RNA sequence: GGGAACGACUCGAGUAGAGUCGAAAAUUUCACUUAGCACAAUGUCUUCAAAGUUCAUGUACCAUAUGACAGAAUUUUCUUUCUUAAGACUGAAUACUGUUCCAUUGAAUGUAUAUACCACAUUUGUUUAUCUCCUUAUCCUGUGAUGGACAUUUGACCACCGUAAUCGAUUCGUCGAUUACGGUGGAAAAGAAACAACAACAACAAC
Reactivity to 2A3 in 0.01 (KOAc 150mM, MgCl2 10mM, bicine 150mM(pH8.5), 24C), signal-to-noise 4, nucleotides 027 to 156: u030u020u030c030a030c040u110u230a020g010c070a050c020a120a110u060g020u030c020u070u110c080a090a070a040g010u050u050c030a030u080g030u070a080c020c060a050u070a050u190g040a020c020a030g060a030a030u080u110u100u040c020u060u060u020c020u090u120a090a060g010a060c010u020g030a020a020u050a130c050u040g040u060u010c010c000a040u090u050g050a100a100u080g050u010a030u030a030u060a160c030c030a060c010a080u020u040u020g090u010u120u040a050u030c040u030c020c030u090u080a100u110c030c030u050g030u040g050a050u050g020g000a020c020a040u060u110u040g040a030
Reactivity to DMS in 0.01 (KOAc 150mM, MgCl2 10mM, bicine 150mM(pH8.5), 24C), signal-to-noise 1, nucleotides 027 to 156: u000u010u010c040a000c050u010u000a080g010c050a120c030a080a110u000g010u010c010u020u000c120a040a080a180g040u000u000c050a090u000g050u000a140c070c040a150u010a080u000g020a090c070a150g010a070a080u010u000u000u000c010u000u000u000c050u010u040a090a170g030a090c030u000g020a050a060u000a050c050u000g020u000u010c060c020a060u000u020g010a110a080u000g000u030a050u020a110u010a120c070c050a130c040a080u010u000u010g040u000u010u000a030u030c040u000c030c060u000u000a050u010c020c070u010g050u010g030a120u000g010g000a040c030a160u010u000u000g000a230